[RMDB]
RNA sequence: GGGAACGACUCGAGUAGAGUCGAAAAGAAAAUGAAUUUCGCCAACGUGCAGCUCGUCGGCGGCAAAAUCGGUAAUGGCUUUUACAGAGGUUUCGUCGGCAUUAAAGCCCUGAAUCAGCGGCACGCAAGCCCAUUAGUCAUUCGUGACUAAUGGGCUAAAAGAAACAACAACAACAAC
Reactivity to DMS in 0.01 (KOAc 150mM, MgCl2 10mM, bicine 150mM(pH8.5), 24C), signal-to-noise 2, nucleotides 027 to 126: g000a060a020a100a150u010g010a100a170u000u010u000c030g020c060c030a080a170c030g000u000g010c060a040g000c020u000c150g060u000c000g000g030c010g010g000c260a060a040a070a050u000c050g040g040u000a000a050u020g000g010c160u040u000u000u000a090c080a050g020a060g010g010u000u000u000c080g040u000c020g030g010c000a100u010u000a060a060a070g030c010c030c020u000g000a100a060u000c140a060g000c020g010g010c000a040c030g010c140a070

Structure probing data (DMS) for a 177-nucleotide construct.
The RNA was probed in 150 mM KOAc, 10 mM MgCl2 and 150 mM bicine (pH 8.5) at 24 C.